This 207-nucleotide RNA was probed chemically with 2A3.
[RMDB]
RNA sequence: GGGAACGACUCGAGUAGAGUCGAAAACUGUGACCUAUUAAACCUCACCUGAUGUAAAUUACUAAGAGAACGUGCUUAAUAGGCAAGAUUCAGGGCAGUCUUAAAUACUUAUUGCUUUACUUUCCAGGCUAAUCAAUAACAUUGCUAGAGAAUAAAAGCGUAUAUCCGGAUUCGUCCGGAUAUACGCAAAAGAAACAACAACAACAAC
Reactivity to 2A3 in 0.01 (KOAc 150mM, MgCl2 10mM, bicine 150mM(pH8.5), 24C), signal-to-noise 1, nucleotides 027 to 156: c040u090g010u030g120a060c000c000u030a060u000u120a050a020a000c050c070u010c000a000c000c000u070g040a090u070g070u160a000a220a130u260u190a060c040u160a220a060g000a000g010a130a000c030g030u030g030c000u000u000a010a000u010a090g000g000c000a050a070g010a060u080u100c010a000g000g020g000c000a000g030u000c030u080u220a030a030a030u190a030c060u150u150a090u160u070g000c000u010u000u060a060c030u060u040u070c040c030a000g000g000c030u100a060a060u010c060a010a190u010a090a070c030a040u000u090g000c000u120a150g010a060g030a240a000u060a120a010a010a010